[RMDB]
RNA sequence: GGGAACGACUCGAGUAGAGUCGAAAAGAUAUGGAAUCUCUGGAGCCAUGCGGUCGGAAACGACCGUGCAUGGCUAUGAAGGAGGAUUCCUAAGUCAAAGCCAUGCAAACUUCGGUUUGCAUGGCAACGAAUAUAUCCACUUCGGUGGAUAUAUUCGAAAAGAAACAACAACAACAAC
Reactivity to DMS in 0.01 (KOAc 150mM, MgCl2 10mM, bicine 150mM(pH8.5), 24C), signal-to-noise 4, nucleotides 027 to 126: g010a030u010a040u000g000g000a020a010u000c010u000c000u000g000g000a010g010c000c010a040u000g010c010g000g010u000c000g020g000a020a020a040c000g010a000c000c010g020u010g020c130a040u010g010g020c010u000a050u020g010a160a230g000g000a030g020g000a020u000u000c000c000u000a000a070g000u000c020a080a140a150g000c000c000a000u000g000c000a010a010a010c000u000u020c220g020g010u000u010u000g000c000a010u000g000g010c010a000a010
Reactivity to 2A3 in 0.01 (KOAc 150mM, MgCl2 10mM, bicine 150mM(pH8.5), 24C), signal-to-noise 3, nucleotides 027 to 126: g000a000u020a000u050g000g000a010a000u000c000u020c010u020g000g020a020g010c010c010a070u300g010c030g000g000u000c000g010g000a010a010a000c000g000a000c000c000g000u010g000c020a190u280g000g000c000u020a150u000g000a000a000g030g020a030g220g090a020u000u020c000c000u010a010a000g010u000c020a130a090a040g000c010c000a000u010g010c010a000a020a020c020u060u120c300g160g020u010u010u010g000c000a000u000g010g000c000a010a000
Structure probing data (DMS and 2A3) for a 177-nucleotide construct. Conditions: 150 mM KOAc, 10 mM MgCl2 and 150 mM bicine (pH 8.5), 24 C. The 2A3 profile rests on 10,889 reads. It was measured as part of the RMDB library TTRDEL. For DMS, 7,919 sequencing reads were counted.